[RMDB]
RNA sequence: GGGAACGACUCGAGUAGAGUCGAAAACCUUAUACCAGAGCUUGCUCUUACUAUUAUAACAGAUGUUAUAGCUGGAAUUAUCUUGUAUUUCGUCUGCAAAUGGCUAGAUGGUAAGAAGUAGACCGACAAAUUGUUUUCUGUUCGCAGAAAACAAUUUAAAAGAAACAACAACAACAAC
Reactivity to 2A3 in 0.01 (KOAc 150mM, MgCl2 10mM, bicine 150mM(pH8.5), 24C), signal-to-noise 9, nucleotides 027 to 126: c010c000u040u100a250u090a070c060c060a060g010a020g140c030u060u060g010c000u020c010u020u030a030c020u010a020u150u060a090u040a180a030c010a010g050a040u050g020u040u010a030u050a100g180c020u040g010g050a080a080u210u090a110u210c020u010u070g010u030a020u020u050u020c000g010u010c010u000g010c030a090a120a140u080g070g030c040u060a060g010a070u020g010g020u010a030a030g020a060a010g020u030a010g040a090c020c030g030a030c080
Reactivity to DMS in 0.01 (KOAc 150mM, MgCl2 10mM, bicine 150mM(pH8.5), 24C), signal-to-noise 6, nucleotides 027 to 126: c020c000u010u040a080u030a120c170c140a090g000a090g020c020u010u010g010c010u010c010u010u000a060c020u000a020u000u010a060u020a090a150c010a070g010a050u010g010u000u000a010u010a040g030c040u000g020g010a080a120u020u030a070u010c020u000u000g010u010a040u000u000u000c020g020u010c000u010g000c070a040a080a140u010g000g020c090u030a070g010a030u010g000g010u000a010a020g000a050a110g020u000a030g010a090c030c060g000a130c190